An RNA of 177 nucleotides, treated with DMS and read out base by base. For DMS the reverse transcriptase was MarathonRT.

RNA sequence: GGGAACGACUCGAGUAGAGUCGAAAAGAUAUGGAUCUUCUAAAAAGGUCCGCCAAGACAUGCCUGAUGUGGUCGGAAACGACCACAAGGGCAACAGCUUGCGGACCUUUUUAGAAGAUCCUAAGUCCAUAUGUACUUUCUUCGGAAAGUACAUAUGAAAAGAAACAACAACAACAAC
Reactivity to DMS in 0.01 (KOAc 150mM, MgCl2 10mM, bicine 150mM(pH8.5), 24C), signal-to-noise 2, nucleotides 027 to 126: g010a120u000a300u010g000g000a020u000c010u000u020c010u010a020a000a000a030a020g020g040u000c000c010g030c200c090a000a000g000a040c090a220u010g020c000c000u000g020a300u020g010u000g000g020u000c020g000g010a110a120a260c010g000a010c020c010a000c000a040a300g030g010g000c000a000a030c250a090g010c010u000u000g000c020g000g010a010c000c000u010u010u000u000u000a010g000a020a000g020a000u000c000c000u000a020a090g000u000c030